[RMDB]
RNA sequence: GGGAACGACUCGAGUAGAGUCGAAAAAGAUUGAGAUUAUCAAUUCGGAGGCUAAGAAAUGAAUGAUUUGUGGGCAAUGCACCUUAUGGGUCCGGAUGACUGGUAUGCCGCGCCUAGCAAGAUCGAGGCUCUGGAAGUUGCUAACCGUAUCAAUUACCUUUAUCUAACAGUUCGCUGUUAGAUAAAGAAAAGAAACAACAACAACAAC
Reactivity to DMS in 0.01 (KOAc 150mM, MgCl2 10mM, bicine 150mM(pH8.5), 24C), signal-to-noise 2, nucleotides 027 to 156: a080g000a070u010u010g020a060g020a180u000u000a050u010c020a060a090u000u000c020g060g000a170g000g030c030u000a060a130g010a040a100a050u010g010a080a080u010g020a120u020u000u000g020u020g000g020g000c030a070a080u000g010c080a070c010c050u000u000a080u010g000g020g000u020c050c030g040g040a090u000g010a080c040u030g000g030u010a100u000g000c000c030g020c110g000c040c020u020a060g000c070a030a120g030a060u000c040g010a130g000g010c010u000c010u010g020g020a070a260g040u000u000g020c010u000a070a040c030c010g020u010a080u000c040a040a110u010u000a120c180
Reactivity to 2A3 in 0.01 (KOAc 150mM, MgCl2 10mM, bicine 150mM(pH8.5), 24C), signal-to-noise 2, nucleotides 027 to 156: a000g080a000u090u100g010a010g020a100u130u110a070u190c020a010a090u120u090c060g040g040a020g050g030c090u100a060a000g040a080a120a100u120g070a060a050u100g080a100u080u040u160g030u090g010g020g000c050a020a020u060g030c050a030c000c020u050u110a100u170g050g000g020u050c060c010g010g020a020u040g030a050c040u060g040g000u060a080u100g010c020c000g030c040g040c030c010u040a040g080c000a050a000g030a050u080c030g020a020g010g050c050u000c030u060g040g030a110a090g030u080u070g030c000u040a020a010c030c020g060u050a030u190c060a100a060u100u090a090c000

Source: RMDB library OK3TST, as collected in RNAgym. This 207-nucleotide RNA was probed chemically with DMS and 2A3. The RNA was probed in 150 mM KOAc, 10 mM MgCl2 and 150 mM bicine (pH 8.5) at 24 C. For DMS, 2,930 sequencing reads were counted.